RNA sequence: GGGAACGACUCGAGUAGAGUCGAAAAGGAUUGAGCGCGUCGAAGUCGGGUUUCUGGGGAAGUGCGCCGCUUGCAAGGGAAUCGGUCAGACGUUGCUUCGGGGGAAGUGUACUGUUUGCAAUGGCCGCAAACUCAGUGAUUUCGAUCACUGAGUUUGAAAAGAAACAACAACAACAAC
Reactivity to 2A3 in 0.01 (KOAc 150mM, MgCl2 10mM, bicine 150mM(pH8.5), 24C), signal-to-noise 3, nucleotides 027 to 126: g050g010a060u090u140g020a030g050c040g010c020g060u050c020g080a100a030g050u060c050g020g030g060u010u060u100c050u060g030g010g000g030a000a080g030u030g040c040g010c020c000g010c040u050u070g040c030a050a030g030g030g060a060a070u070c030g020g000u020c020a030g000a110c010g040u080u150g020c000u050u040c020g030g010g020g030g030a020a090g010u030g030u110a070c050u060g080u080u050u030g030c040a080a090u040g020g000c000c020g010
Reactivity to DMS in 0.01 (KOAc 150mM, MgCl2 10mM, bicine 150mM(pH8.5), 24C), signal-to-noise 5, nucleotides 027 to 126: g010g000a110u010u000g010a060g010c060g010c060g010u000c050g010a100a130g010u000c050g010g020g010u000u000u000c060u010g010g010g010g000a100a080g000u010g000c070g010c040c060g020c060u000u020g010c060a080a120g000g000g000a060a070u000c040g010g000u000c040a160g000a080c080g010u000u010g010c000u000u000c070g010g010g000g000g000a060a050g010u000g000u000a040c080u010g000u000u000u000g010c080a080a090u000g010g020c030c060g020

Annotation: Conditions: 150 mM KOAc, 10 mM MgCl2 and 150 mM bicine (pH 8.5), 24 C. Chemical mapping of a 177-nucleotide RNA with 2A3 and DMS. Source: RMDB library OK2TRN, as collected in RNAgym. DMS adducts were read by reverse transcription with MarathonRT. Values cover nucleotides 27 to 126.